[RMDB]
RNA sequence: GGGAACGACUCGAGUAGAGUCGAAAAAAUCCACGUGGUAGAGUCAUAGUUAGGUUCGCUAUGGUGCAACUCUUUAAGGCAAUAACGAACUAAUUCUAAGCAAGUAAUGGAGAAAUGCCAGGGUCACGAGAGUUAGCGAAUUCGUUCGCUAACUCUCAAAAGAAACAACAACAACAAC
Reactivity to DMS in 0.01 (KOAc 150mM, MgCl2 10mM, bicine 150mM(pH8.5), 24C), signal-to-noise 2, nucleotides 027 to 126: a060a050u030c040c010a100c110g010u020g040g040u030a020g010a060g020u010c010a060u000a050g000u010u010a090g030g010u000u010c020g000c040u000a010u000g020g000u010g040c190a060a010c080u000c050u010u030u040a160a100g000g000c030a050a030u040a040a040c120g010a050a030c030u000a050a010u010u010c010u020a070a110g000c110a010a070g030u030a070a070u010g020g000a050g000a090a020a000u020g000c000c000a010g000g000g000u030c090a030c150
Reactivity to 2A3 in 0.01 (KOAc 150mM, MgCl2 10mM, bicine 150mM(pH8.5), 24C), signal-to-noise 3, nucleotides 027 to 126: a000a000u030c000c000a100c010g050u060g060g000u030a030g010a000g090u070c010a010u010a020g020u010u030a070g040g030u010u000c000g000c010u010a010u060g070g000u080g050c040a120a090c040u050c000u120u140u150a160a090g040g020c020a030a030u010a060a030c030g010a000a000c030u010a020a000u100u000c030u100a030a010g030c020a080a010g060u130a150a010u170g050g010a090g070a030a050a040u060g000c010c000a010g070g010g000u030c070a050c080

Structure probing data (DMS and 2A3) for a 177-nucleotide construct. The reactions ran in a buffer of 150 mM KOAc, 10 mM MgCl2 and 150 mM bicine (pH 8.5), at 24 C. 2A3 adducts were read by reverse transcription with SuperScript II with manganese.